[RMDB]
The record gives the reactivity of an RNA of 177 nucleotides to 2A3 and DMS. The data come from the RNA Mapping Database (RMDB), library OK2TRN. Values cover nucleotides 27 to 126.
RNA sequence: GGGAACGACUCGAGUAGAGUCGAAAAGUGUCUCUGAGCACGCAGGCAGUCGGGAGGUGAGUGGCUGCCGGGCUGCUUCCUCGAUGUGAGGCCAGCUUGUUCUCAGACUGGGAGCCACAGCAGCGUCCUUAGAACAAGUAUUCGUACUUGUUCUAAGAAAAGAAACAACAACAACAAC
Reactivity to 2A3 in 0.01 (KOAc 150mM, MgCl2 10mM, bicine 150mM(pH8.5), 24C), signal-to-noise 9, nucleotides 027 to 126: g050u040g030u010c010u000c050u110g030a020g040c020a010c080g030c030a030g020g000c010a010g020u020c030g030g090g070a170g050g110u220g080a100g020u100g020g000c000u020g020c020c000g000g090g000c010u000g000c000u060u040c010c000u010c030g150a230u220g160u180g170a020g010g000c000c000a010g000c000u040u070g020u120u010c040u000c020a050g030a230c020u030g000g020g020a010g000c000c010a040c010a030g060c020a010g040c010g080u070c010
Reactivity to DMS in 0.01 (KOAc 150mM, MgCl2 10mM, bicine 150mM(pH8.5), 24C), signal-to-noise 9, nucleotides 027 to 126: g010u000g010u000c020u000c030u010g000a050g010c030a030c110g030c060a110g010g010c020a060g010u000c030g000g010g010a120g010g010u010g010a110g030u000g010g010c010u000g010c030c050g000g010g010c020u000g000c030u000u000c020c010u000c030g000a140u000g010u010g000a030g000g010c280c040a030g010c030u000u010g010u000u000c040u000c030a070g000a070c040u000g000g010g000a050g000c030c030a040c060a130g000c100a080g010c090g010u010c090